[RMDB]
RNA sequence: GGGAACGACUCGAGUAGAGUCGAAAAAAGAGAGAUUUAUUUUGAAAGCCAAGUUUCUCCAGAGGCUUGUCAGUGAAGCUUCAGAGUUCAAGGCUGCUGCAUGUCAGUGAGAUCAACUGUGUGCCUUUGACACAUUGGACUUAGGUAAUCAGUCCAAUAUACGGAGGUACUUCGGUACCUCCGUAUAAAAAGAAACAACAACAACAAC
Reactivity to 2A3 in 0.01 (KOAc 150mM, MgCl2 10mM, bicine 150mM(pH8.5), 24C), signal-to-noise 1, nucleotides 027 to 156: a000a000g160a010g030a000g010a010u210u200u120a100u180u240u300u150g060a130a090a000g000c010c010a000a060g010u000u070u020c030u030c030c030a120g010a010g020g000c010u060u080g050u080c020a020g000u070g130a000a000g000c000u080u010c040a020g030a020g140u130u070c040a060a070g020g000c000u000g010c010u030g010c000a110u090g050u100c000a000g000u000g200a030g020a050u140c030a020a070c010u020g030u040g020u000g100c000c020u100u180u090g050a070c030a010c020a180u000u000g000g000a030c010u040u030a060g140g000u150a100a060u160c030a010g000u000c000c000a000a040
Reactivity to DMS in 0.01 (KOAc 150mM, MgCl2 10mM, bicine 150mM(pH8.5), 24C), signal-to-noise 1, nucleotides 027 to 156: a060a100g000a140g010a100g010a080u000u000u000a100u000u000u010u010g020a090a110a060g020c000c050a050a260g000u000u000u020c020u000c040c010a300g000a090g010g020c000u010u000g010u010c040a200g000u010g000a030a050g020c010u000u010c030a060g000a110g010u010u000c020a050a110g010g000c020u010g010c040u010g010c020a090u000g020u010c080a100g040u000g000a110g020a050u010c060a090a090c040u000g000u000g000u010g010c010c010u000u010u010g010a080c050a000c070a070u010u010g000g020a070c010u000u010a110g060g010u010a140a160u000c110a110g000u010c010c000a060a240